[RMDB]
RNA sequence: GGGAACGACUCGAGUAGAGUCGAAAAUGAAUCAGCAUGUUAAGGCCCGUUUAUUUUAUGAUAUUUUUCAUACAUUCUUUCGCGACGAAAUUGCCGAACUGAUUGGUGAAGUUGGUUAUGGUAUUAAUAUUGAUGGUCAUGCUGUCUAUGCUGAAGACCUACUUGGAUACUUCGGUAUCCAAGUAGGAAAAGAAACAACAACAACAAC
Reactivity to 2A3 in 0.01 (KOAc 150mM, MgCl2 10mM, bicine 150mM(pH8.5), 24C), signal-to-noise 3, nucleotides 027 to 156: u130g040a010a120u010c000a000g050c010a020u020g030u050u140a110a080g030g000c000c030c000g020u110u170u050a090u060u160u010u050a040u050g010a030u010a140u050u160u040u040u000c010a020u030a240c010a030u030u060c030u040u070u050c030g060c060g030a090c000g050a110a140a160u120u100g040c050c000g020a030a010c030u030g030a070u040u010g040g000u060g020a050a080g030u050u040g010g030u070u120a060u120g040g000u110a040u110u160a120a080u070a050u120u090g070a050u040g000g000u020c050a030u070g030c010u000g030u010c030u010a040u070g070c040u060g060a030a010g010a030
Reactivity to DMS in 0.01 (KOAc 150mM, MgCl2 10mM, bicine 150mM(pH8.5), 24C), signal-to-noise 1, nucleotides 027 to 156: u000g000a100a110u000c030a040g030c030a040u020g010u000u010a080a110g040g000c000c020c060g000u000u000u000a090u010u000u000u000a050u030g000a090u010a120u030u000u010u010u000c010a050u010a050c110a090u000u000c030u000u010u000c030g010c050g040a150c050g010a060a020a170u000u000g030c000c040g030a020a080c020u000g000a070u010u000g000g040u000g000a070a120g000u000u000g000g030u000u000a120u000g020g020u000a050u000u000a070a100u000a070u000u050g000a050u000g040g000u000c040a150u000g030c020u020g010u000c010u010a160u010g010c030u000g040a110a140g000a250